Chemical mapping of a 177-nucleotide RNA with DMS.
RNA sequence: GGGAACGACUCGAGUAGAGUCGAAAAUUAUCAAAGACUUGGAAGAAAGAACAAAAAAAAAAUUGCCUCUUAGUUUUAUAAAUGUAAACCUGGGUUCCUGUUCACUAACUUCAAUCUGCCAACCUGGCAAUUGGGAUUAGUUCGCUAAUCCCAAUUGAAAAGAAACAACAACAACAAC
Reactivity to DMS in 0.01 (KOAc 150mM, MgCl2 10mM, bicine 150mM(pH8.5), 24C), signal-to-noise 1, nucleotides 027 to 126: u000u000a050u020c080a130a110a090g000a050c070u000u030g000g030a050a060g000a110a050a130g000a090a140c040a000a000a020a000a060a040a160a000a270a100u000u000g000c040c010u000c020u010u000a050g020u000u000u010u000a080u000a060a080a120u020g000u000a020a010a090c060c050u000g020g000g000u000u000c010c020u000g010u010u000c070a080c100u000a050a030c040u000u000c090a060a100u000c100u000g030c000c020a020a100c110c080u000g020g020
The RNA was probed in 150 mM KOAc, 10 mM MgCl2 and 150 mM bicine (pH 8.5) at 24 C. The data come from the RNA Mapping Database (RMDB), library OK2TST.